[RMDB]
RNA sequence: GGGAACGACUCGAGUAGAGUCGAAAAAACUCUCAGGUAUUGGCUACUAUGUAAGCCAUAUUCAUACCGGAUCGUGUCAUGACUAUGAUACUCAUCAGGAUGGUGCCCACCCGCCCGGCAUGCGCCCCAUGUAACCCCACUUCGGUGGGGUUACAUGAAAAGAAACAACAACAACAAC
Reactivity to DMS in 0.01 (KOAc 150mM, MgCl2 10mM, bicine 150mM(pH8.5), 24C), signal-to-noise 2, nucleotides 027 to 126: a070a050c100u000c010u000c050a120g000g000u010a020u010u020g000g000c000u000a050c050u000a120u050g020u020a060a040g000c010c010a010u000a050u020u030c140a090u010a100c050c050g000g000a080u040c250g030u000g010u000c040a040u010g000a110c110u050a060u000g000a050u010a030c030u000c130a030u010c040a060g020g000a090u010g010g020u030g000c010c020c000a140c050c000c010g000c040c020c010g000g020c040a010u020g000c080g020c010c000c010
Reactivity to 2A3 in 0.01 (KOAc 150mM, MgCl2 10mM, bicine 150mM(pH8.5), 24C), signal-to-noise 3, nucleotides 027 to 126: a000a000c030u030c000u010c020a000g070g010u030a020u070u040g010g020c000u020a010c020u120a150u300g080u110a090a020g030c010c000a000u030a030u070u090c030a010u050a150c000c040g050g010a060u060c040g020u010g000u100c010a030u020g030a110c100u240a060u080g020a010u000a050c010u010c050a100u010c010a030g060g000a040u020g060g070u050g020c000c010c020a030c000c000c000g040c030c010c010g000g030c000a000u030g000c020g010c010c030c000

The record gives the reactivity of an RNA of 177 nucleotides to DMS and 2A3. 2A3 adducts were read by reverse transcription with SuperScript II with manganese. For DMS, 3,240 sequencing reads were counted. The reactions ran in a buffer of 150 mM KOAc, 10 mM MgCl2 and 150 mM bicine (pH 8.5), at 24 C. The 2A3 profile rests on 1,444 reads. Source: RMDB library RFM100, as collected in RNAgym.